The record gives the reactivity of an RNA of 207 nucleotides to 2A3.
The 2A3 profile rests on 982 reads.
Conditions: 150 mM KOAc, 10 mM MgCl2 and 150 mM bicine (pH 8.5), 24 C.
[RMDB]
RNA sequence: GGGAACGACUCGAGUAGAGUCGAAAACGCUGGGUUUCCGCAGAUACGUGGAACUACUACUCUGAAGCGCGCACGGAGUAGCCACGUGUAGGAAAUGCCUGUGCUGAAGCGCGCACGGCAACCGAAAGGUGCGAGUAUUCCAGGUUCGCCUGGAAAAGUAACCUCCGUUGUUCGCAACGGAGGUUACAAAAGAAACAACAACAACAAC
Reactivity to 2A3 in 0.01 (KOAc 150mM, MgCl2 10mM, bicine 150mM(pH8.5), 24C), signal-to-noise 1, nucleotides 027 to 156: c050g050c020u060g000g010g010u020u030u010c000c010g000c130a040g030a050u040a040c000g000u010g000g050a030a040c030u090a050c000u010a000c000u050c020u040g020a300a110g030c010g000c000g000c010a050c000g030g030a010g000u020a000g050c000c000a010c000g000u000g020u070a050g070g090a020a000a000u120g260c040c020u140g000u010g000c010u040g050a120a020g030c010g000c020g020c000a000c010g120g000c060a080a150c020c000g090a190a100a010g040g000u050g060c060g000a020g050u020a160u080u000c000c000a010g000g040u040u050c290g120c010c010u010g000g000a000a030a120a000